[RMDB]
Annotation: Conditions: 150 mM KOAc, 10 mM MgCl2 and 150 mM bicine (pH 8.5), 24 C. An RNA of 177 nucleotides, treated with 2A3 and DMS and read out base by base. DMS adducts were read by reverse transcription with MarathonRT. Values cover nucleotides 27 to 126.

RNA sequence: GGGAACGACUCGAGUAGAGUCGAAAACUGAUCCAGUCCUCUAGAGCCCACGCAAUUGUGGCUUUGACCCGCCACACGGAGAAGUGUGUGGUGGUUGAUGCACCGGGGCUCCUCCGUGAGGUAGGUACAUACCGGACGUGUUCGCACGUCCGGUAUGAAAAGAAACAACAACAACAAC
Reactivity to 2A3 in 0.01 (KOAc 150mM, MgCl2 10mM, bicine 150mM(pH8.5), 24C), signal-to-noise 2, nucleotides 027 to 126: c030u050g020a120u100c100c030a040g060u050c010c020u010c060u080a040g000a010g090c060c040c010a110c040g080c090a170a290u130u110g030u060g040g010c000u030u010u050g030a000c010c030c010g010c000c030a020c000a010c000g060g040a110g040a140a070g060u050g010u050g040u080g150g050u020g030g000u040u140g060a040u110g000c020a000c000c020g040g000g080g010c010u020c000c010u040c000c020g080u040g000a000g000g000u020a050g010g010u020a050
Reactivity to DMS in 0.01 (KOAc 150mM, MgCl2 10mM, bicine 150mM(pH8.5), 24C), signal-to-noise 1, nucleotides 027 to 126: c020u010g010a120u000c060c040a120g010u000c050c040u000c100u020a050g010a050g000c060c010c030a090c080g000c190a140a090u000u000g010u000g010g000c060u010u000u010g000a040c010c000c040g000c020c000a050c000a020c000g000g000a080g040a060a060g010u000g020u000g020u020g010g020u000g020g010u010u030g020a150u010g000c000a020c010c040g000g000g000g000c000u000c010c020u010c050c050g030u000g010a050g040g010u000a010g010g020u000a170